[RMDB]
RNA sequence: GGGAACGACUCGAGUAGAGUCGAAAACAUUGGUUCAAGAGCAUUUCGGUGAGAUUCGAAGUAAGUACAUUGGUGAGGAUUUGCUUGACCCACAAGCUAUUCAAUCAAACCCAGGUCUCAAAGCGUAAAUGACAUACCUGUUCGCAGGUAUGUCAUUAAAAGAAACAACAACAACAAC
Reactivity to 2A3 in 0.01 (KOAc 150mM, MgCl2 10mM, bicine 150mM(pH8.5), 24C), signal-to-noise 6, nucleotides 027 to 126: c060a080u090u180g100g010u130u100c090a140a000g010a040g110c070a110u030u080u140c050g030g010u070g040a080g000a030u080u090c050g020a050a020g080u150a110a030g040u070a090c040a150u090u180g060g010u060g080a100g030g000a030u070u070u160g000c000u040u040g030a090c000c030c000a080c000a030a010g000c010u050a030u070u110c030a010a050u010c010a010a010a040c000c010c010a020g070g000u000c000u000c030a080a090a000g030c030g080u120a070
Reactivity to DMS in 0.01 (KOAc 150mM, MgCl2 10mM, bicine 150mM(pH8.5), 24C), signal-to-noise 5, nucleotides 027 to 126: c070a170u010u010g010g000u020u010c040a070a090g020a100g000c050a050u010u000u010c050g000g030u010g020a070g010a120u000u030c030g000a110a070g030u000a050a080g020u010a050c150a160u020u000g020g000u000g020a190g030g000a060u000u030u000g020c000u000u000g000a110c050c020c040a100c060a010a010g010c020u000a050u010u010c050a070a050u000c060a060a050a070c030c030c040a070g000g010u000c020u010c050a050a100a130g000c110g030u030a050